[RMDB]
RNA sequence: GGGAACGACUCGAGUAGAGUCGAAAAGUCAACACACUUGGCCUGCAGGCCAUGGUGCGAGCAGCUUCCACAGCCUGGCAAGACCUUUGACCGCACAGCCUCCGCGUGGCCGGAGAGGCCGUGUGGUGUGUGUAAUGACGUUCGCGUCAUUACACACAAAAGAAACAACAACAACAAC
Reactivity to DMS in 0.01 (KOAc 150mM, MgCl2 10mM, bicine 150mM(pH8.5), 24C), signal-to-noise 1, nucleotides 027 to 126: g010u000c040a120a110c040a040c080a040c050u000u000g000g000c000c000u000g040c180a170g000g000c000c050a040u000g010g000u000g010c050g040a120g020c110a090g000c060u000u000c010c030a020c100a020g000c030c030u030g010g050c050a080a060g000a080c050c030u000u010u030g000a160c050c000g040c000a030c030a050g020c020c020u000c000c010g050c090g020u030g040g000c040c010g000g010a120g010a060g010g010c000c010g020u000g030u000g000g010u000
Reactivity to 2A3 in 0.01 (KOAc 150mM, MgCl2 10mM, bicine 150mM(pH8.5), 24C), signal-to-noise 1, nucleotides 027 to 126: g050u050c040a120a010c030a010c020a030c050u050u100g030g000c030c020u120g000c060a080g020g020c000c000a000u050g020g010u000g000c000g000a020g040c080a020g000c020u160u000c020c000a040c050a050g070c000c010u050g030g000c050a020a050g060a140c020c000u060u070u180g080a050c000c020g000c000a010c000a000g020c000c000u080c000c010g000c050g120u150g090g000c050c020g000g060a160g020a040g010g030c010c000g000u000g000u020g030g030u020

The record gives the reactivity of an RNA of 177 nucleotides to DMS and 2A3. Conditions: 150 mM KOAc, 10 mM MgCl2 and 150 mM bicine (pH 8.5), 24 C. DMS adducts were read by reverse transcription with MarathonRT. The DMS profile rests on 920 reads. It was measured as part of the RMDB library RFMREP. 2A3 adducts were read by reverse transcription with SuperScript II with manganese.